Chemical mapping of a 207-nucleotide RNA with DMS and 2A3. For DMS the reverse transcriptase was MarathonRT. It was measured as part of the RMDB library OK3TST. The reactions ran in a buffer of 150 mM KOAc, 10 mM MgCl2 and 150 mM bicine (pH 8.5), at 24 C. Reactivities are rounded to 0.1 and cut off at 0 and 3.

RNA sequence: GGGAACGACUCGAGUAGAGUCGAAAAAACACAAAGCAUCUCUGUAUGAUUAGCGGUUAGUUAUGGAUCCUUAAGGAGCUGAAGACAUACUAAACCUAACUUUGAGAAGAAAGAAUAUUACCACCUUUUUGAAAAGAUGUUUUUUAGCUCAUCCGACCUAAAUCACAUGGUUCGCCAUGUGAUUUAGAAAAGAAACAACAACAACAAC
Reactivity to DMS in 0.01 (KOAc 150mM, MgCl2 10mM, bicine 150mM(pH8.5), 24C), signal-to-noise 2, nucleotides 027 to 156: a070a060c020a080c100a060a060a070g030c020a060u000c000u000c020u020g030u000a070u010g000a080u000u000a070g050c150g000g010u000u010a060g000u000u000a110u010g020g000a170u010c010c020u000u000a120a150g010g010a080g030c040u010g010a050a020g010a080c040a050u000a120c080u010a040a060a070c020c020u000a080a100c040u000u030u010g030a170g000a040a080g010a060a090a080g000a110a070u000a110u000u000a120c030c020a090c050c030u000u000u000u020u010g000a150a060a100a080g020a050u000g000u000u000u000u000u000u000a130g030c010u000c020a110u000c060c000g040a300c160
Reactivity to 2A3 in 0.01 (KOAc 150mM, MgCl2 10mM, bicine 150mM(pH8.5), 24C), signal-to-noise 6, nucleotides 027 to 156: a010a000c140a020c040a050a050a030g020c010a040u030c040u030c040u110g130u200a110u110g070a130u090u120a030g040c050g050g030u040u070a020g010u010u060a080u080g060g010a040u050c030c000u050u130a090a100g090g000a010g010c020u020g040a020a010g030a010c000a010u100a060c040u090a070a080a080c030c010u050a050a090c040u060u120u120g080a070g020a080a020g020a040a100a020g040a050a050u160a100u210u170a070c050c020a040c040c000u030u050u030u040u140g080a070a070a030a030g010a020u010g010u020u000u000u010u040u110a010g000c030u020c020a060u030c050c030g030a070c020